Structure probing data (2A3 and DMS) for a 177-nucleotide construct. The RNA was probed in 150 mM KOAc, 10 mM MgCl2 and 150 mM bicine (pH 8.5) at 24 C. For 2A3, 546 sequencing reads were counted. For 2A3 the reverse transcriptase was SuperScript II with manganese.
RNA sequence: GGGAACGACUCGAGUAGAGUCGAAAAACGCGACAAAUUAUGGGUGUGCACUGAAUGUGUGUGCGUGUGUGUGCAACGCAUGCAGAAUUUAAAGCACACGAACAAUUUGUUAAAGUGCCCCGUAGUCAUAAUACUGGGGCUUCGGCCCCAGUAUUAUAAAAGAAACAACAACAACAAC
Reactivity to 2A3 in 0.01 (KOAc 150mM, MgCl2 10mM, bicine 150mM(pH8.5), 24C), signal-to-noise 1, nucleotides 027 to 126: a000c040g040c040g060a000c000a010a040a000u000u140a130u300g150g000g000u030g030u030g050c000a010c180u070g020a000a030u070g040u000g000u000g020u000g000c010g000u060g020u050g040u000g030u080g100c040a040a000c000g010c000a000u020g000c010a000g090a150a040u000u060u070a000a050a030g000c000a000c000a000c000g000a040a000c000a000a000u030u000u000g000u000u060a070a000a180g010u020g020c000c000c000c000g260u220a110g130u070c060
Reactivity to DMS in 0.01 (KOAc 150mM, MgCl2 10mM, bicine 150mM(pH8.5), 24C), signal-to-noise 2, nucleotides 027 to 126: a080c040g030c300g000a000c000a000a000a010u000u000a160u000g040g000g040u020g040u000g020c000a140c230u020g010a000a000u000g020u000g030u000g000u000g010c010g000u010g060u000g050u020g010u050g000c040a230a050c000g000c000a000u020g000c060a000g010a090a030u020u030u000a060a140a270g000c000a010c000a010c000g020a090a000c290a010a010u020u000u000g000u010u000a040a180a190g000u000g000c120c020c000c120g060u020a070g000u000c180